Source: RMDB library OK2TRN, as collected in RNAgym. Chemical mapping of a 177-nucleotide RNA with 2A3 and DMS. For 2A3, 566 sequencing reads were counted. Values cover nucleotides 27 to 126.

[RMDB]
RNA sequence: GGGAACGACUCGAGUAGAGUCGAAAAUUACGCCUUAUAUCUGUAACAAACGUUAAUUAUAUUGGAAAGGUGCAACCUAUGGUAGAUUACGCGCCUUAUAUCAGCAGGUUUCUACAGCGGAAUGGUAUACUGAUGCCGUAUUCGUACGGCAUCAGUAAAAAGAAACAACAACAACAAC
Reactivity to 2A3 in 0.01 (KOAc 150mM, MgCl2 10mM, bicine 150mM(pH8.5), 24C), signal-to-noise 1, nucleotides 027 to 126: u090u050a060c010g000c000c020u170u000a150u020a020u210c020u020g070u050a130a110c050a010a180a060c120g000u060u170a060a020u220u130a280u030a110u190u110g070g000a060a030a050g000g000u010g000c000a030a020c000c110u170a120u220g150g100u150a050g030a200u190u070a060c140g040c000g000c020c000u020u030a070u010a000u040c000a010g110c000a030g030g050u000u060u010c050u020a050c000a000g000c000g010g130a010a040u060g060g000u120a030
Reactivity to DMS in 0.01 (KOAc 150mM, MgCl2 10mM, bicine 150mM(pH8.5), 24C), signal-to-noise 1, nucleotides 027 to 126: u010u010a060c150g020c020c000u020u010a080u010a190u020c110u000g000u000a030a110c140a040a080a080c120g010u000u020a040a210u010u030a120u000a080u030u000g030g020a050a050a000g000g020u000g000c000a110a070c060c010u000a070u010g000g000u000a000g010a060u020u000a060c210g050c040g030c010c050u010u000a040u000a040u000c110a090g000c180a050g020g000u000u000u020c000u000a070c110a080g000c200g010g000a070a070u010g000g000u000a090

Conditions: 150 mM KOAc, 10 mM MgCl2 and 150 mM bicine (pH 8.5), 24 C.